[RMDB]
This 177-nucleotide RNA was probed chemically with 2A3 and DMS. The 2A3 profile rests on 1,319 reads. Conditions: 150 mM KOAc, 10 mM MgCl2 and 150 mM bicine (pH 8.5), 24 C. Values cover nucleotides 27 to 126.

RNA sequence: GGGAACGACUCGAGUAGAGUCGAAAAGUGCCCUCCUGCUGGUCGCACACGCACAGCAGGAUCUGGCAGUCGCAGUCGGGGCAGCCAAAACGAACGUGGCAGACAGGGAGGGAAGGAAGAUGGCGGCCCGAUCCUAGAUGUUCGCAUCUAGGAUCGGAAAAGAAACAACAACAACAAC
Reactivity to 2A3 in 0.01 (KOAc 150mM, MgCl2 10mM, bicine 150mM(pH8.5), 24C), signal-to-noise 1, nucleotides 027 to 126: g130u070g000c000c000c000u020c000c010u000g040c000u070g050g280u270c110g000c010a070c030a040c300g000c020a050c000a080g000c000a000g000g000a000u000c000u040g010g010c000a020g070u070c000g000c140a050g010u090c030g020g000g000g000c000a000g000c000c000a030a100a060a020c100g090a110a000c080g070u020g000g010c000a000g060a100c030a010g050g000g060a120g040g040g010a070a030g040g000a050a050g030a060u080g070g000c000g020g000c010
Reactivity to DMS in 0.01 (KOAc 150mM, MgCl2 10mM, bicine 150mM(pH8.5), 24C), signal-to-noise 2, nucleotides 027 to 126: g050u000g010c000c010c210u000c000c010u000g010c010u000g020g000u010c170g010c030a100c280a110c260g000c040a080c010a000g000c000a020g000g000a020u010c090u000g020g000c020a060g030u010c050g000c110a060g020u020c070g000g010g000g040c050a100g040c030c020a040a030a050a150c100g020a050a110c130g010u000g000g070c020a050g030a070c090a160g010g000g000a160g000g000g010a050a090g010g020a060a040g020a050u000g000g010c030g020g000c080